[RMDB]
RNA sequence: GGGAACGACUCGAGUAGAGUCGAAAAAGACACGUACUUGAUGAAGCUGCAUUCAGUGUCAGCCCAAGAUACAAUCUACGUGGUAGGACAAAAUCCAGUCAGACAAGCUCCGUUGUCCCGCUUGAUGAAUUAUACGUGGAUUCGUCCACGUAUAAUUAAAAGAAACAACAACAACAAC
Reactivity to DMS in 0.01 (KOAc 150mM, MgCl2 10mM, bicine 150mM(pH8.5), 24C), signal-to-noise 9, nucleotides 027 to 126: a070g010a110c030a030c030g020u010a060c120u000u000g000a130u010g010a140a150g020c030u000g010c080a070u000u000c180a120g010u000g010u000c020a070g010c020c030c020a090a080g010a150u000a080c110a070a050u000c080u000a050c060g020u000g010g010u000a070g010g000a050c050a050a050a040a300u000c040c020a060g010u010c050a090g000a070c060a050a110g000c030u000c050c050g010u000u000g010u000c010c010c020g020c150u010u000g010a150u010g010
Reactivity to 2A3 in 0.01 (KOAc 150mM, MgCl2 10mM, bicine 150mM(pH8.5), 24C), signal-to-noise 7, nucleotides 027 to 126: a000g110a010c010a000c030g030u070a030c020u060u060g010a070u090g060a140a030g020c020u030g010c030a050u050u180c090a110g120u020g080u160c010a010g000c000c000c000a020a020g050a020u200a050c070a060a080u020c020u040a040c030g050u060g020g060u090a070g030g060a020c040a060a090a020a010u010c030c000a030g060u070c030a000g020a080c010a060a020g000c030u010c030c030g050u050u040g040u020c000c000c000g040c070u090u110g070a130u130g060
Background:
The record gives the reactivity of an RNA of 177 nucleotides to DMS and 2A3. For DMS, 19,002 sequencing reads were counted. High 2A3 reactivity points to a flexible backbone, as in loops and unpaired stretches. DMS adducts were read by reverse transcription with MarathonRT.